[RMDB]
RNA sequence: GGGAACGACUCGAGUAGAGUCGAAAAGAACCGCGAUUCGUCGCGGUUCGAGCGCCGUAGCGCGCAACCGCGUAACGGCAGCAUUAGCGCGCAGCUGCCGACGAUCGGGUGGUUUCGACCACCCGAACAGGCAUUAGCAGUUCGCUGCUAAUGCCUGAAAAGAAACAACAACAACAAC
Reactivity to 2A3 in 0.01 (KOAc 150mM, MgCl2 10mM, bicine 150mM(pH8.5), 24C), signal-to-noise 1, nucleotides 027 to 126: g020a000a000c000c000g000c020g010a010u040u070c200g020u000c000g170c000g040g000u010u000c000g000a010g000c030g000c020c010g200u150a050g000c050g000c020g000c140a040a070c050c000g040c030g070u070a100a050c010g030g010c000a010g000c030a080u020u140a020g050c020g020c010g000c100a040g000c010u020g000c010c000g020a040c050g010a060u020c010g000g020g010u000g020g000u020u050u060c150g100a020c000c010a000c000c000c000g010a000a010
Reactivity to DMS in 0.01 (KOAc 150mM, MgCl2 10mM, bicine 150mM(pH8.5), 24C), signal-to-noise 2, nucleotides 027 to 126: g000a020a000c000c000g020c010g000a020u000u000c170g030u010c000g010c000g000g000u000u000c000g020a080g010c050g000c000c050g020u000a160g010c080g000c040g010c050a070a070c150c030g010c010g010u020a110a100c050g000g020c000a050g000c010a060u010u010a060g000c030g000c040g000c140a110g010c010u010g030c000c000g010a100c090g000a060u000c000g020g000g010u000g010g000u000u000u020c150g010a040c000c000a010c000c000c070g010a010a050

This 177-nucleotide RNA was probed chemically with 2A3 and DMS. The 2A3 profile rests on 2,710 reads. For DMS, 2,294 sequencing reads were counted. The reactions ran in a buffer of 150 mM KOAc, 10 mM MgCl2 and 150 mM bicine (pH 8.5), at 24 C. For DMS the reverse transcriptase was MarathonRT.